[RMDB]
RNA sequence: GGGAACGACUCGAGUAGAGUCGAAAACACGAGUUUAGACUCGUAGCAGAUAGCUCAGUAACACGUGGCCAAACUACCCUCUGGAUCGGGAUAACCUCGGGAAACUGAGGCUAAUCCUGAAUAGCGUUGUUUAGAGACAGUUCGCUGUCUCUAAACAAAAAGAAACAACAACAACAAC
Reactivity to 2A3 in 0.01 (KOAc 150mM, MgCl2 10mM, bicine 150mM(pH8.5), 24C), signal-to-noise 6, nucleotides 027 to 126: c030a000c010g000a010g010u100u110u130a140g170a070c000u010c030g010u030a030g030c020a010g020a180u130a050g010c020u000c040a040g020u070a050a020c010a010c100g020u030g070g000c030c010a030a090a020c030u080a070c000c010c000u010c020u030g050g070a110u080c010g000g000g000a000u000a020a010c000c010u000c000g000g000g000a000a090a010c020u030g000a000g010g000c000u010a030a070u000c000c010u000g010a010a030u100a050g050c050g040u020
Reactivity to DMS in 0.01 (KOAc 150mM, MgCl2 10mM, bicine 150mM(pH8.5), 24C), signal-to-noise 3, nucleotides 027 to 126: c090a030c000g000a020g010u000u010u040a170g010a080c000u010c030g000u000a100g020c070a100g000a090u000a100g000c000u000c050a070g030u020a100a070c110a020c040g040u000g010g010c050c000a060a050a050c100u000a120c000c020c040u000c040u000g020g020a240u020c010g000g000g000a020u000a110a210c000c000u000c010g010g000g000a100a120a160c020u000g000a000g010g000c020u000a060a080u000c000c020u000g030a010a120u020a090g000c140g030u000
Conditions: 150 mM KOAc, 10 mM MgCl2 and 150 mM bicine (pH 8.5), 24 C. Structure probing data (2A3 and DMS) for a 177-nucleotide construct. For DMS the reverse transcriptase was MarathonRT.